[RMDB]
RNA sequence: GGGAACGACUCGAGUAGAGUCGAAAAGAAAACGAUCGCCUGAGGAUCGAUCAGGAAAAGAAAACUAGUGCAGUAGACUAGAUACUGAAAAGAAAACCAUUGCUAAGGAAUGGACUUAGAAAAGAAAGGGUAAGAAUGAGUUCGCUCAUUCUUACCCAAAAGAAACAACAACAACAAC
Reactivity to DMS in 0.01 (KOAc 150mM, MgCl2 10mM, bicine 150mM(pH8.5), 24C), signal-to-noise 2, nucleotides 027 to 126: g000a010a050a020a120c080g000a030u000c000g000c000c020u000g000a060g000g050a030u010c090g000a170u010c010a040g020g000a050a100a080a080g000a090a100a130a130c020u000a020g000u000g000c090a130g020u020a060g010a060c000u000a020g000a030u010a100c030u020g000a020a050a030a090g020a070a080a100a140c000c010a030u010u000g010c010u020a040a110g010g050a060a100u000g000g000a130c080u000u000a060g010a100a070a020a070g040a140a100a140
Reactivity to 2A3 in 0.01 (KOAc 150mM, MgCl2 10mM, bicine 150mM(pH8.5), 24C), signal-to-noise 3, nucleotides 027 to 126: g050a000a010a000a020c050g010a010u020c040g040c090c090u060g100a090g000g060a140u080c040g010a050u040c020a000g020g080a060a130a000a050g180a000a020a000a060c010u000a020g050u030g150c130a100g070u150a050g060a050c030u000a020g000a050u040a030c050u050g050a040a000a080a030g110a030a090a000a000c030c000a020u000u060g090c100u110a050a000g090g020a160a070u100g040g030a010c020u130u070a040g080a050a060a020a020g110a040a140a000
This 177-nucleotide RNA was probed chemically with DMS and 2A3. For DMS the reverse transcriptase was MarathonRT. 2A3 adducts were read by reverse transcription with SuperScript II with manganese. Conditions: 150 mM KOAc, 10 mM MgCl2 and 150 mM bicine (pH 8.5), 24 C.